[RMDB]
RNA sequence: GGGAACGACUCGAGUAGAGUCGAAAAGCUCCUAUCUCAGGAGAUAGCACAUGAUAAAAAGAAGUAAUGGUGUCUUGUCUCUUCAGAUUUGGGUUUUAUAAACCUGAGCCAAACCACAUAUGACACCCAAUGUGCACUGAGCACUUCUGACAUGCUAGCAGGUGAUUAAUUUCGAUUAAUCACCUGCAAAAGAAACAACAACAACAAC
Reactivity to 2A3 in 0.01 (KOAc 150mM, MgCl2 10mM, bicine 150mM(pH8.5), 24C), signal-to-noise 1, nucleotides 027 to 156: g030c030u010c000c010u030a050u050c030u020c010a000g010g000a030g010a020u050a030g020c000a000c000a040u040g030a080u160a170a170a070a000a010g080a100a020g080u110a110a080u080g030g010u000g000u000c000u040u020g050u030c010u000c000u070u130c070a060g010a200u000u040u070g030g000g000u040u030u010u020a200u190a050a080a000c000c030u020g010a000g040c010c010a000a000a060c040c050a010c030a080u090a040u120g030a020c000a000c000c010c000a000a120u010g000u010g020c020a020c100u070g020a000g020c010a000c050u050u050c020u090g030a020c020a100u090g030c000u080a030